Notes
The record gives the reactivity of an RNA of 177 nucleotides to DMS and 2A3. The data come from the RNA Mapping Database (RMDB), library OK2TRN. For 2A3 the reverse transcriptase was SuperScript II with manganese. The reactions ran in a buffer of 150 mM KOAc, 10 mM MgCl2 and 150 mM bicine (pH 8.5), at 24 C. The 2A3 profile rests on 914 reads.
[RMDB]
RNA sequence: GGGAACGACUCGAGUAGAGUCGAAAAGAGCGACUUAAUAUUAGAUCGUCGCGAUCUAAAUAGUCCGACACGCUGUCGCGGGGCAGCACCUCCCGGGAAAGGGCCCUUGGUGCGCAUUCGAAAGAAACAGUGCUAUGGAUUUCGAUCCAUAGCACUGAAAAGAAACAACAACAACAAC
Reactivity to DMS in 0.01 (KOAc 150mM, MgCl2 10mM, bicine 150mM(pH8.5), 24C), signal-to-noise 2, nucleotides 027 to 126: g010a220g020c030g030a010c010u010u010a060a110u010a190u000u000a000g000a020u000c000g040u010c300g020c090g020a030u000c000u010a010a030a180u000a090g040u000c040c000g000a070c160a070c130g000c140u000g020u000c040g010c130g010g000g010g050c020a040g010c020a060c030c050u000c020c000c000g020g010g020a060a100a110g060g020g020c060c010c060u000u000g000g000u000g010c010g020c050a080u000u000c040g000a070a080a020g000a050a120a170
Reactivity to 2A3 in 0.01 (KOAc 150mM, MgCl2 10mM, bicine 150mM(pH8.5), 24C), signal-to-noise 1, nucleotides 027 to 126: g110a020g020c050g000a020c020u090u170a160a010u130a220u240u050a020g010a030u020c020g130u170c160g020c160g140a000u000c010u000a040a060a130u070a020g000u000c040c000g050a010c010a000c110g090c070u060g000u040c000g000c010g000g070g000g000c100a110g010c000a020c010c000u000c040c000c000g030g010g000a110a220a020g080g100g050c000c010c010u000u000g030g000u020g000c030g000c020a120u090u150c020g100a140a120a170g080a000a130a000